[RMDB]
RNA sequence: GGGAACGACUCGAGUAGAGUCGAAAAGGGGUCUCUAUCAGAGUCCGAAACGGGAGCUUGGAUUUAUUCUGCAUUUGAGGCUGAAGCCUCCACGGCCUCAAAUGCAGAAUUGUCAGCUCCCUGAGUAGGACGACGAAGAUAGAGACGGAGGCACCCACUUUACAUGAGAGUUCGCUCUCAUGUAAAGAAAAGAAACAACAACAACAAC
Reactivity to DMS in 0.01 (KOAc 150mM, MgCl2 10mM, bicine 150mM(pH8.5), 24C), signal-to-noise 1, nucleotides 027 to 156: g000g070g080g000u000c000u010c010u010a000u030c020a180g020a300g040u000c010c010g000a130a150a300c300g000g000g000a020g000c020u040u010g050g020a090u000u020u000a030u020u000c010u050g030c010a000u000u020u000g030a030g010g000c000u030g000a090a090g010c020c010u020c000c010a250c010g010g050c000c010u000c000a000a020a010u000g040c010a000g020a000a020u000u000g000u000c040a100g000c000u000c010c010c010u000g010a040g030u000a170g010g020a040c010g010a210c220g000a120a090g010a030u000a050g020a010g000a000c010g000g020a050g050g050c010a260c040c000c030a190
Reactivity to 2A3 in 0.01 (KOAc 150mM, MgCl2 10mM, bicine 150mM(pH8.5), 24C), signal-to-noise 1, nucleotides 027 to 156: g040g000g000g010u010c000u000c000u000a020u000c000a040g010a000g060u000c000c010g010a010a000a010c010g010g000g010a030g010c100u230u300g250g010a090u150u190u110a050u170u000c000u000g020c000a010u000u000u000g000a000g000g000c010u030g030a100a020g020c000c010u010c010c000a030c020g000g040c000c000u000c000a000a000a000u000g000c000a000g000a000a000u000u000g010u020c020a000g000c000u000c020c000c000u010g000a010g000u010a000g020g000a000c000g000a000c000g000a000a010g000a010u020a020g010a000g000a000c010g000g000a020g010g000c020a040c000c000c000a010

An RNA of 207 nucleotides, treated with DMS and 2A3 and read out base by base. Values cover nucleotides 27 to 156. 2A3 adducts were read by reverse transcription with SuperScript II with manganese.